[RMDB]
This 177-nucleotide RNA was probed chemically with 2A3.
It was measured as part of the RMDB library OK1LIB.
The reactions ran in a buffer of 150 mM KOAc, 10 mM MgCl2 and 150 mM bicine (pH 8.5), at 24 C.
Values are in units of 0.01, from 0 to 300, in steps of 10.
RNA sequence: GGGAACGACUCGAGUAGAGUCGAAAAAAAUCUAGUUCUGUGGACUGUCUUUCUGCCACCAAGAUCAAAGCUCUGGUUCCUGCCAGAGUCAGUGGGCUGAGCAGGAAGCCAGCAAGCAUCCAGAGGAUCAAUCAUCCGCCUUCGGGCGGAUGAUUGAAAAAGAAACAACAACAACAAC
Reactivity to 2A3 in 0.01 (KOAc 150mM, MgCl2 10mM, bicine 150mM(pH8.5), 24C), signal-to-noise 1, nucleotides 027 to 126: a070a000a000u020c060u060a070g060u180u010c000u000g210u060g120g020a060c000u000g010u040c000u030u030u000c000u000g000c000c000a000c000c000a080a050g080a280u110c220a050a120a000g010c020u000c000u000g060g040u240u300c110c060u300g000c000c000a000g000a000g000u050c040a000g060u080g050g000g180c130u070g070a080g110c000a000g000g000a010a000g020c000c000a010g000c000a030a030g100c000a050u000c000c000a000g060a000g060g030a040